[RMDB]
Annotation: Structure probing data (DMS and 2A3) for a 177-nucleotide construct. Values are in units of 0.01, from 0 to 300, in steps of 10.
RNA sequence: GGGAACGACUCGAGUAGAGUCGAAAAUGCGCGAACCACUUGAGGUUCCGGGACUCCUUGACGUCCAGACCGAUUCGUUCGAGUGGCUGAUCGGUUCGCCGCGCUGGCGCGAAUCCGCCGCCGAGCGCAGCUGUGGUCCUUUCGAGGACCACAGCUGAAAAGAAACAACAACAACAAC
Reactivity to DMS in 0.01 (KOAc 150mM, MgCl2 10mM, bicine 150mM(pH8.5), 24C), signal-to-noise 2, nucleotides 027 to 126: u010g000c030g010c120g010a010a020c000c010a170c290u010u000g000a170g020g000u000u000c010c020g010g000g010a050c020u000c030c110u010u000g020a050c200g000u000c000c050a080g000a300c040c020g000a110u010u020c120g020u000u000c020g020a120g030u010g020g010c010u000g020a030u000c060g010g000u000u000c020g010c020c040g020c090g020c130u000g020g010c030g000c050g010a100a050u010c100c020g000c050c000g000c020c010g020a020g010c010g030
Reactivity to 2A3 in 0.01 (KOAc 150mM, MgCl2 10mM, bicine 150mM(pH8.5), 24C), signal-to-noise 2, nucleotides 027 to 126: u130g020c000g020c110g010a000a000c010c010a070c120u150u260g220a110g070g020u000u000c010c020g050g080g000a000c000u020c040c050u000u050g060a060c130g010u000c000c020a030g080a040c000c000g050a120u080u090c020g010u030u020c020g030a060g100u040g000g010c010u000g010a050u020c030g100g000u160u130c010g000c030c000g030c040g000c140u190g050g000c000g000c000g030a070a100u020c030c030g000c010c010g000c020c010g010a010g000c050g000
For 2A3, 2,139 sequencing reads were counted. Reactivities are given for positions 27 through 126. It was measured as part of the RMDB library OK2TST.